[RMDB]
RNA sequence: GGGAACGACUCGAGUAGAGUCGAAAAACGGCAGCCAGCGCCAGACCUGCACUCAGUGCUCUGGGUAUGAUUUUCACGGUAACUCCGGAACCGAAGGGGAUGCCCGGGCAUCAGCCCCCGGAAUGAGGCUAAGGAAUCGAUUCGUCGAUUCCUUAGCAAAAGAAACAACAACAACAAC
Reactivity to 2A3 in 0.01 (KOAc 150mM, MgCl2 10mM, bicine 150mM(pH8.5), 24C), signal-to-noise 1, nucleotides 027 to 126: a000c050g030g030c020a030g020c010c000a030g040c010g030c000c000a020g050a080c000c020u030g030c030a100c050u100c040a040g000u010g030c000u000c060u200g000g050g000u040a070u090g170a160u080u080u000u140c130a140c050g040g010u080a120a050c050u000c040c050g000g000a030a020c010c000g060a080a030g060g010g010g000a000u020g030c000c000c040g010g040g000c000a040u050c040a030g070c020c000c000c010c000g010g040a070a030u180g040a020g130
Reactivity to DMS in 0.01 (KOAc 150mM, MgCl2 10mM, bicine 150mM(pH8.5), 24C), signal-to-noise 2, nucleotides 027 to 126: a100c150g010g030c040a040g010c040c030a070g020c080g020c030c010a060g000a040c080c000u000g010c090a140c120u010c050a040g030u000g000c080u010c010u000g020g010g000u000a030u020g020a100u000u000u000u000c030a180c060g000g000u000a070a120c140u000c070c040g020g000a080a110c040c040g020a120a040g000g010g020g000a080u000g000c060c030c030g000g010g000c030a040u010c110a080g000c050c010c000c010c000g000g000a100a060u000g020a140g020